Conditions: 150 mM KOAc, 10 mM MgCl2 and 150 mM bicine (pH 8.5), 24 C. This 177-nucleotide RNA was probed chemically with 2A3 and DMS. It was measured as part of the RMDB libraries RFM100 and RFMREP.
[RMDB]
RNA sequence: GGGAACGACUCGAGUAGAGUCGAAAAUCUCAACUCUAAAACUCUUGUAGUUUAAAUCUAAUCUAAACUUUAUAAACGGCACUUCCUGCGUGUCCAUGCCCGCGGGCCUGGUCUUGUCAUAGUGCUGCCGUACUACAAUAUUCGUAUUGUAGUACGGAAAAGAAACAACAACAACAAC
Reactivity to 2A3 in 0.01 (KOAc 150mM, MgCl2 10mM, bicine 150mM(pH8.5), 24C), signal-to-noise 8, nucleotides 027 to 126: u010c010u000c010a030a070c030u080c040u210a140a100a060a060c020u050c030u120u270g120u290a030g020u030u050u070a100a130a060u060c080u110a030a060u060c020u060a100a110a110c040u120u200u060a190u170a120a100a020c020g000g000c000a000c010u030u000c010c000u000g010c000g010u070g010u000c000c010a000u010g000c000c000c010g050c200g050g000g000c000c000u000g010g000u000c000u020u090g010u010c000a020u130a170g000u000g000c000u000g010
Reactivity to DMS in 0.01 (KOAc 150mM, MgCl2 10mM, bicine 150mM(pH8.5), 24C), signal-to-noise 4, nucleotides 027 to 126: u000c000u000c000a070a160c210u030c070u010a080a060a060a080c050u010c040u040u000g000u020a010g010u000u000u010a030a100a100u040c090u020a090a070u020c060u030a060a030a090c070u010u000u010a060u020a110a080a280c040g010g000c010a010c020u000u030c000c000u000g010c010g000u000g020u000c010c000a010u000g000c000c010c040g040c300g060g010g020c020c040u010g000g010u000c010u000u010g000u020c010a020u020a040g010u000g000c010u000g000

For DMS the reverse transcriptase was MarathonRT. For 2A3 the reverse transcriptase was SuperScript II with manganese.